Chemical mapping of a 177-nucleotide RNA with 2A3 and DMS. 2A3 adducts were read by reverse transcription with SuperScript II with manganese. The RNA was probed in 150 mM KOAc, 10 mM MgCl2 and 150 mM bicine (pH 8.5) at 24 C.
[RMDB]
RNA sequence: GGGAACGACUCGAGUAGAGUCGAAAACUGUCGUUCUUCGGAACGACAGAAAGAACGCGUGGGUCACGCAAGGAGGUGCGUGUGGGACGCGACAAACCCAAAAAAGCGUUCGGUUCGCCGAACGCAAUCUACACAUUCAGUUCGCUGAAUGUGUAGAAAAAGAAACAACAACAACAAC
Reactivity to 2A3 in 0.01 (KOAc 150mM, MgCl2 10mM, bicine 150mM(pH8.5), 24C), signal-to-noise 5, nucleotides 027 to 126: c000u000g000u000c000g010u010u000c010u040u030c180g090g000a000a000c000g000a000c000a000g000a000a000a000g030a090a020c020g010c000g000u030g030g230g100u080c010a000c010g000c030a040a050g180g110a140g050g190u070g010c020g000u010g000u030g030g160g050a000c000g000c000g010a010c020a010a080a040c000c000c000a060a090a020a010a020a010g000c000g000u000u000c010g000g020u030u030c210g020c030c000g000a000a000c000g000c000a000a000
Reactivity to DMS in 0.01 (KOAc 150mM, MgCl2 10mM, bicine 150mM(pH8.5), 24C), signal-to-noise 5, nucleotides 027 to 126: c000u000g000u000c000g010u000u000c000u000u000c200g020g010a010a000c000g010a010c000a000g000a020a060a090g010a130a080c020g010c000g010u000g010g020g010u010c000a010c010g010c010a050a130g020g020a110g010g010u000g000c010g030u000g010u000g010g010g010a020c000g010c010g000a060c100a070a080a130c000c000c000a010a050a060a080a110a100g000c010g010u000u000c000g000g000u000u010c190g020c010c000g010a010a010c010g010c000a020a010